[RMDB]
RNA sequence: GGGAACGACUCGAGUAGAGUCGAAAACGCACUAAGCUGACCGUCAAUAUGGGUGCAAUGGGGGAGCCCGAUGCAUUCAGGUUGGCUAAAGAGAGAUGAACCGAGCGAGGGGUGAAAACCAGCAGCUAAAAGUCUCCGCGGUAAGCAGUAGUGGGAUAGUACAAUACUUGUUCGCAAGUAUUGUACUAAAAGAAACAACAACAACAAC
Reactivity to DMS in 0.01 (KOAc 150mM, MgCl2 10mM, bicine 150mM(pH8.5), 24C), signal-to-noise 2, nucleotides 027 to 156: c080g050c030a070c020u010a100a160g010c060u000g010a050c040c040g060u000c030a050a080u000a090u020g020g030g040u010g000c000a070a100u000g010g020g010g130g010a300g110c010c010c000g010a120u000g010c010a070u000u000c010a060g000g090u020u000g000g000c010u010a030a060a070g000a130g010a020g000a020u010g000a070a200c100c100g010a150g010c050g000a260g000g040g050g000u010g010a120a060a110a070c000c000a230g020c000a260g050c040u000a090a090a110a260g000u010c020u000c000c010g020c030g040g000u010a060a040g000c050a090g000u000a080g020u000g020g050g000a180u010
Reactivity to 2A3 in 0.01 (KOAc 150mM, MgCl2 10mM, bicine 150mM(pH8.5), 24C), signal-to-noise 2, nucleotides 027 to 156: c050g080c010a010c020u040a050a020g000c000u000g040a020c000c030g010u040c020a070a030u040a060u180g010g010g000u020g020c000a050a150u180g010g000g000g000g040a070g090c000c000c030g030a040u020g000c010a000u000u030c010a000g060g000u010u010g030g000c000u030a000a040a000g130a000g000a000g000a000u040g020a060a060c150c100g000a020g000c020g010a080g040g030g020g010u050g070a100a060a000a010c010c000a000g010c010a000g000c040u030a050a050a020a040g010u000c010u000c010c020g000c010g020g010u000a010a020g000c020a080g050u050a000g010u030g020g040g050a040u040